Background:
The record gives the reactivity of an RNA of 177 nucleotides to 2A3 and DMS. For 2A3, 17,689 sequencing reads were counted.
RNA sequence: GGGAACGACUCGAGUAGAGUCGAAAAGAUAUGGAGCAGAACUACAGGCAGAGAGUGUGAUGACCUCGGAAACGAGCAAGCACUUUUUGCCUGCUGCUCCUAAGUCAAACCACCCUUCGGGGUGGAACUCGUAUAAUUUGUUCGCAAAUUAUACGAGAAAAGAAACAACAACAACAAC
Reactivity to 2A3 in 0.01 (KOAc 150mM, MgCl2 10mM, bicine 150mM(pH8.5), 24C), signal-to-noise 5, nucleotides 027 to 126: g030a010u060a030u190g000g010a000g000c020a000g010a110a050c140u240a060c300a000g020g010c000a000g010a000g000a010g020u010g010u020g050a300u140g050a100c030c020u000c010g030g000a090a080a020c010g000a000g000c000a120a040g000c000a000c000u030u010u000u000u000g000c010c000u000g000c010u000g000c000u000c000c000u000a000a000g000u010c000a010a040a120c010c000a000c010c010c000u010u070c300g080g000g010g000u000g010g000a010a020
Reactivity to DMS in 0.01 (KOAc 150mM, MgCl2 10mM, bicine 150mM(pH8.5), 24C), signal-to-noise 7, nucleotides 027 to 126: g000a050u010a300u000g000g000a010g010c010a020g010a080a040c050u010a300c020a010g000g000c010a010g010a010g010a010g000u000g020u000g010a110u000g000a100c300c000u000c000g000g010a080a110a140c000g010a010g000c030a060a210g000c010a010c020u000u000u000u000u000g000c000c000u000g000c000u000g000c010u000c000c000u000a010a030g000u010c030a070a100a140c010c000a000c000c000c000u000u010c180g020g000g000g010u000g000g000a010a040
DMS adducts were read by reverse transcription with MarathonRT. The reactions ran in a buffer of 150 mM KOAc, 10 mM MgCl2 and 150 mM bicine (pH 8.5), at 24 C.